[RMDB]
RNA sequence: GGGAACGACUCGAGUAGAGUCGAAAAAGGUAACUACAUCGGUGCCGUUUGGGCUUACUUUACGUCUGCAACAGUCAUCUCCUCUAAAGACUCUGUGACGACAGAUGAAGUCAAACAAGCGUUAACCAGCAUAAUUAUCCUUCGGGAUAAUUAUGCUAAAAGAAACAACAACAACAAC
Reactivity to 2A3 in 0.01 (KOAc 150mM, MgCl2 10mM, bicine 150mM(pH8.5), 24C), signal-to-noise 9, nucleotides 027 to 126: a000g170g010u160a120a060c050u150a050c040a170u140c110g030g000u030g050c020c010g030u040u040u060g060g030g000c020u040u060a050c010u080u140u080a060c050g030u000c030u060g010c050a070a010c000a100g040u030c010a070u030c030u030c040c010u040c020u110a110a120a010g000a010c010u000c010u040g060u070g070a060c060g030a050c030a030g060a040u100g070a070a020g020u050c010a080a050a080c030a060a010g030c010g030u050u050a070a070c010c020
Reactivity to DMS in 0.01 (KOAc 150mM, MgCl2 10mM, bicine 150mM(pH8.5), 24C), signal-to-noise 5, nucleotides 027 to 126: a060g050g000u000a050a120c050u020a030c100a070u040c060g020g030u020g010c090c030g020u010u010u000g000g010g010c040u000u010a030c030u000u010u010a070c140g010u000c020u040g030c100a100a040c100a030g010u000c060a060u010c070u000c020c000u000c060u020a050a110a090g000a060c070u000c040u010g020u000g010a100c110g000a090c060a080g010a090u010g000a090a090g010u010c050a080a050a230c130a090a060g020c060g000u010u010a070a090c080c060

Structure probing data (2A3 and DMS) for a 177-nucleotide construct. The reactions ran in a buffer of 150 mM KOAc, 10 mM MgCl2 and 150 mM bicine (pH 8.5), at 24 C. For DMS the reverse transcriptase was MarathonRT.